[RMDB]
Chemical mapping of a 177-nucleotide RNA with DMS and 2A3.

RNA sequence: GGGAACGACUCGAGUAGAGUCGAAAAGAUAUGGAUCCCACAUAGGCAACAGCAUGUGGAUCGGAAACGAUCCCAUGACAUGCCUGGGUGGGAUCCUAAGUCAAACAACCAUCUUCGGAUGGUUGAAGAAUGAUCAUUCCUUCGGGAAUGAUCAUUCAAAAGAAACAACAACAACAAC
Reactivity to DMS in 0.01 (KOAc 150mM, MgCl2 10mM, bicine 150mM(pH8.5), 24C), signal-to-noise 3, nucleotides 027 to 126: g020a080u010a300u010g010g000a010u020c000c000c000a000c000a060u000a010g010g000c010a070a100c300a180g000c020a000u000g020u010g000g000a010u000c010g010g010a090a080a190c000g010a010u010c000c000c000a000u000g030a020c080a260u010g000c020c000u010g000g010g040u010g000g000g000a000u000c000c000u000a010a040g000u010c030a110a160a240c010a010a010c000c000a010u010c000u010u010c210g010g000a020u000g000g000u000u000g000a060a150
Reactivity to 2A3 in 0.01 (KOAc 150mM, MgCl2 10mM, bicine 150mM(pH8.5), 24C), signal-to-noise 2, nucleotides 027 to 126: g000a010u060a020u160g000g000a000u000c000c040c000a000c010a010u070a010g000g040c020a120a060c120a300g150c000a030u040g190u300g070g000a010u010c040g010g020a100a090a020c000g000a010u000c020c000c000a010u000g040a010c010a030u080g020c010c000u000g050g030g000u000g010g000g010a000u000c000c000u000a000a000g010u000c010a040a050a110c010a010a000c000c000a000u010c010u010u090c280g180g010a000u020g000g000u000u010g000a010a000

Conditions: 150 mM KOAc, 10 mM MgCl2 and 150 mM bicine (pH 8.5), 24 C.